[RMDB]
RNA sequence: GGGAACGACUCGAGUAGAGUCGAAAAGAGAAGAAGCGCGCGAAUUGGAAACCAGGGAACUAUAUUACGCGCGCAAGGAACCGGGCCUUGGUUCCUUGGAAAGAUUAGAUAAUUACCCUGGUAAGAAACCGCUAUCAGUAUUCGUACUGAUAGCGGUAAAAGAAACAACAACAACAAC
Reactivity to 2A3 in 0.01 (KOAc 150mM, MgCl2 10mM, bicine 150mM(pH8.5), 24C), signal-to-noise 3, nucleotides 027 to 126: g080a000g070a070a040g050a080a020g080c000g000c000g000c000g010a010a010u060u030g040g080a110a070a050c000c000a010g000g000g000a010a050c040u000a000u010a030u250u190a090c030g000c000g000c010g000c000a000a000g000g000a000a010c000c010g050g150g100c030c080u170u200g000g000u000u000c000c000u000u000g030g080a070a080a030g050a020u100u130a060g150a150u170a210a150u140u140a110c000c000c000u000g000g000u010a010a010g000a040a070
Reactivity to DMS in 0.01 (KOAc 150mM, MgCl2 10mM, bicine 150mM(pH8.5), 24C), signal-to-noise 1, nucleotides 027 to 126: g000a100g000a110a200g000a160a110g050c000g040c040g000c020g000a080a070u010u020g000g030a280a130a070c010c000a010g020g000g010a140a150c020u000a000u010a010u000u000a110c020g030c000g000c000g030c000a000a000g010g000a000a000c000c000g000g090g000c140c090u020u060g020g000u000u000c020c000u000u000g000g000a060a180a090g000a060u030u010a020g000a130u020a030a060u040u000a140c020c030c000u020g000g000u010a130a110g000a130a150
The data come from the RNA Mapping Database (RMDB), library OK1LIB. Chemical mapping of a 177-nucleotide RNA with 2A3 and DMS. The reactions ran in a buffer of 150 mM KOAc, 10 mM MgCl2 and 150 mM bicine (pH 8.5), at 24 C. DMS adducts were read by reverse transcription with MarathonRT.